[RMDB]
RNA sequence: GGGAACGACUCGAGUAGAGUCGAAAACCAGCCUCAGUCUGCAAACGGGCAGCCCCAAGAUGGGCGCGCUGGCCCUGCGGUACGCUCUGCCUGUUGUAUUUGAGUUUAGACACACUCAGUGGCCAUUUGACAGACUUAAGAUCUUCAUGGGCUGGGCCCCCGACUUAUCAUUCGUGAUAAGUCGGGGAAAAGAAACAACAACAACAAC
Reactivity to DMS in 0.01 (KOAc 150mM, MgCl2 10mM, bicine 150mM(pH8.5), 24C), signal-to-noise 1, nucleotides 027 to 156: c010c000a000g000c030c010u000c270a170g010u000c000u020g000c110a060a080a050c070g000g010g030c030a070g020c080c000c020c020a170a200g000a090u000g000g040g050c000g020c130g020c120u000g010g020c000c000c040u020g000c060g060g030u000a090c150g020c010u010c010u010g000c050c000u010g000u000u020g010u000a040u000u000u000g010a140g010u000u000u000a180g000a280c130a140c080a040c010u000c040a050g000u000g000g030c030c030a110u040u000u030g010a260c050a110g000a010c040u000u040a100a190g010a130u000c020u000u000c060a260u010g030g000g000c020u000g030g000g000c030
Reactivity to 2A3 in 0.01 (KOAc 150mM, MgCl2 10mM, bicine 150mM(pH8.5), 24C), signal-to-noise 1, nucleotides 027 to 156: c010c010a000g000c030c000u070c050a010g000u030c010u020g000c010a010a020a000c000g060g080g000c010a040g020c000c000c000c060a100a060g220a240u160g000g020g000c020g000c030g000c100u070g100g030c000c030c000u060g000c080g010g110u130a030c010g050c080u020c020u090g020c010c070u130g020u140u120g060u090a180u010u250u120g010a040g000u010u030u110a000g070a000c040a000c000a010c130u040c030a030g010u200g150g070c080c010a060u030u000u050g120a130c000a000g000a000c000u000u060a090a060g020a120u080c040u180u100c160a080u210g060g000g000c000u000g010g010g000c000